[RMDB]
Structure probing data (DMS and 2A3) for a 177-nucleotide construct. For 2A3, 1,080 sequencing reads were counted. It was measured as part of the RMDB library OK2TRN. DMS (dimethyl sulfate) methylates the pairing face of unpaired adenines and cytosines. Reactivities are given for positions 27 through 126. The reactions ran in a buffer of 150 mM KOAc, 10 mM MgCl2 and 150 mM bicine (pH 8.5), at 24 C.

RNA sequence: GGGAACGACUCGAGUAGAGUCGAAAAUAUGGAUGCGAACGGAAUAAUUUCACUUAUUAGCAACGUUGGUUUUCCUGUUGCGGUGUGUGUUGCACUUUUCUAUAAUAUGGAAAAACAGAACGAACGCAACAUCAAAGCAUUUCGAUGCUUUGAUGUUAAAAGAAACAACAACAACAAC
Reactivity to DMS in 0.01 (KOAc 150mM, MgCl2 10mM, bicine 150mM(pH8.5), 24C), signal-to-noise 1, nucleotides 027 to 126: u010a080u010g020g010a070u000g020c010g010a060a060c090g010g010a090a080u000a060a070u010u030u010c190a100c150u000u010a050u010u000a100g010c040a050a100c040g000u000u010g000g010u020u000u000u000c020c010u010g010u000u000g010c090g020g020u010g000u000g000u000g010u000u000g000c070a090c080u000u000u000u000c030u000a060u010a070a060u010a300u000g000g000a020a030a010a020a060c090a130g000a060a040c060g000a060a080c140g000c070
Reactivity to 2A3 in 0.01 (KOAc 150mM, MgCl2 10mM, bicine 150mM(pH8.5), 24C), signal-to-noise 2, nucleotides 027 to 126: u150a060u030g120g000a030u050g040c030g010a000a000c010g000g100a110a040u190a190a060u100u270u220c050a070c060u060u060a010u040u020a100g010c000a000a060c030g070u020u060g150g020u050u090u150u040c000c020u060g040u110u050g000c050g010g000u010g020u010g010u010g120u070u130g020c020a030c030u030u060u030u000c010u040a100u030a240a140u140a200u130g020g090a000a010a020a000a030c040a020g020a040a010c030g010a020a000c020g050c030